[RMDB]
RNA sequence: GGGAACGACUCGAGUAGAGUCGAAAAGGACACUAAGCCCUCAAGGGGAGAAUCAUCUGCAGUCUCUCUCUGUUCACAUGUACAGUGUAUCAGUCAGGGUUCUCUAGAGGGACAGAACUAAUAGGAUUGCUGAACAUAUAAAGGGGAAUUUAUUAAGAAUCCUUCCUAGUUUCGACUAGGAAGGAUUAAAAGAAACAACAACAACAAC
Reactivity to 2A3 in 0.01 (KOAc 150mM, MgCl2 10mM, bicine 150mM(pH8.5), 24C), signal-to-noise 2, nucleotides 027 to 156: g030g000a000c020a000c060u020a000a150g000c000c000c000u000c040a020a050g000g110g000g000a000g010a020a020u070c040a030u080c050u100g020c070a070g150u000c010u010c000u040c020u000c000u050g030u060u080c050a060c060a180u160g080u170a060c030a060g030u000g040u100a090u070c030a030g110u030c010a000g000g010g090u050u000c000u010c000u010a000g010a030g050g010g010a010c000a010g030a050a020c010u060a000a130u070a090g050g010a050u020u080g050c000u030g070a090a010c040a020u120a000u040a060a100a060g010g040g020g000a060a040u160u200u140a120u200u300a100a050g000
Reactivity to DMS in 0.01 (KOAc 150mM, MgCl2 10mM, bicine 150mM(pH8.5), 24C), signal-to-noise 2, nucleotides 027 to 156: g000g110a040c030a150c060u010a200a250g000c000c000c010u000c060a070a070g000g030g030g030a060g000a130a080u000c050a190u000c130u010g020c100a120g030u000c010u000c000u000c010u000c000u010g000u000u000c080a040c070a070u000g050u000a110c170a140g000u000g010u000a050u010c040a040g030u000c040a100g020g000g020u000u010c010u020c010u000a110g010a110g030g000g030a080c020a040g010a050a070c060u010a000a110u000a080g000g000a130u000u000g000c000u000g000a060a050c000a100u000a120u000a030a030a060g010g060g040g030a080a190u020u000u000a060u040u010a080a130g010
Conditions: 150 mM KOAc, 10 mM MgCl2 and 150 mM bicine (pH 8.5), 24 C. The record gives the reactivity of an RNA of 207 nucleotides to 2A3 and DMS. For 2A3, 861 sequencing reads were counted. Reactivities are given for positions 27 through 156.